[RMDB]
RNA sequence: GGGAACGACUCGAGUAGAGUCGAAAAAGUGUGCCAACGUUAAUCAACAAGGCACUGGCGAUAGCCGCAAACUGACUGGCCUCUUCGGUUUCGAUAACCAUCGCUGGCGAUGCACCGAGCGCCAGCACCCUAUUUUACGUUUCGACGUAAAAUAGGGAAAAGAAACAACAACAACAAC
Reactivity to 2A3 in 0.01 (KOAc 150mM, MgCl2 10mM, bicine 150mM(pH8.5), 24C), signal-to-noise 8, nucleotides 027 to 126: a010g140u070g000u020g000c010c000a060a010c120g020u040u090a100a200u280c080a020a040c010a060a080g000g000c000a010c020u010g010g000c010g130a170u120a120g040c020c010g030c060a060a080a060c050u060g070a050c030u030g050g020c020c010u050c000u080u060c040g040g040u030u060u120c050g030a050u060a170a050c030c020a070u120c100g000c010u010g020g000c010g020a030u080g030c030a020c030c030g030a020g020c010g000c000c000a000g000c010a030
Reactivity to DMS in 0.01 (KOAc 150mM, MgCl2 10mM, bicine 150mM(pH8.5), 24C), signal-to-noise 7, nucleotides 027 to 126: a110g020u000g010u000g010c000c010a050a220c300g000u010u010a090a130u010c190a070a040c030a120a300g010g000c000a000c020u000g010g010c030g000a130u010a070g000c030c020g000c140a040a050a090c060u010g000a080c070u000g000g020c040c030u010c050u010u010c070g010g000u000u000u010c060g010a080u020a060a120c120c040a050u000c100g010c030u000g000g000c000g000a050u000g010c080a190c030c040g000a070g020c140g000c000c000a010g020c010a100

Source: RMDB library OK2TST, as collected in RNAgym. Chemical mapping of a 177-nucleotide RNA with 2A3 and DMS. DMS (dimethyl sulfate) methylates the pairing face of unpaired adenines and cytosines. For 2A3 the reverse transcriptase was SuperScript II with manganese. The RNA was probed in 150 mM KOAc, 10 mM MgCl2 and 150 mM bicine (pH 8.5) at 24 C.